[RMDB]
RNA sequence: GGGAACGACUCGAGUAGAGUCGAAAAGAUAUGGAUGACCCUGCUUUUGACGCUGACUAUCGGAAACGAUAGAGAACAGCGAUAAGCAGCGGUCAUCCUAAGUCAAACACCAAGUUCGCUUGGUGAAGAGUCUACACUUCUUCGGAAGUGUAGACUCAAAAGAAACAACAACAACAAC
Reactivity to 2A3 in 0.01 (KOAc 150mM, MgCl2 10mM, bicine 150mM(pH8.5), 24C), signal-to-noise 1, nucleotides 027 to 126: g020a020u120a060u100g000g000a010u000g010a000c000c000c000u000g070c030u100u140u170u220g230a130c070g000c000u040g050a140c010u050a000u000c030g030g000a080a050a050c020g030a020u000a060g040a000g130a300a010c030a020g000c000g000a000u060a040a010g000c000a040g020c050g000g000u000c000a020u000c000c000u000a000a000g000u050c020a000a200a040c000a000c000c000a000a000g020u100u160c300g060c240u000u030g000g000u020g010a080a000
Reactivity to DMS in 0.01 (KOAc 150mM, MgCl2 10mM, bicine 150mM(pH8.5), 24C), signal-to-noise 1, nucleotides 027 to 126: g040a030u020a300u000g030g000a010u000g010a020c010c000c010u000g000c000u000u000u000u000g020a300c130g000c000u000g020a230c000u000a030u010c000g000g000a170a120a160c010g020a020u000a000g000a030g000a160a110c000a000g000c000g000a160u010a020a020g000c000a010g000c220g000g010u000c010a000u000c000c000u000a000a070g000u000c040a240a060a300c040a010c000c000a000a150g000u000u010c300g000c010u000u000g030g030u000g000a090a050
Structure probing data (2A3 and DMS) for a 177-nucleotide construct.
For 2A3, 1,896 sequencing reads were counted.
The data come from the RNA Mapping Database (RMDB), library TTRDES.
Reactivities are given for positions 27 through 126.
The DMS profile rests on 774 reads.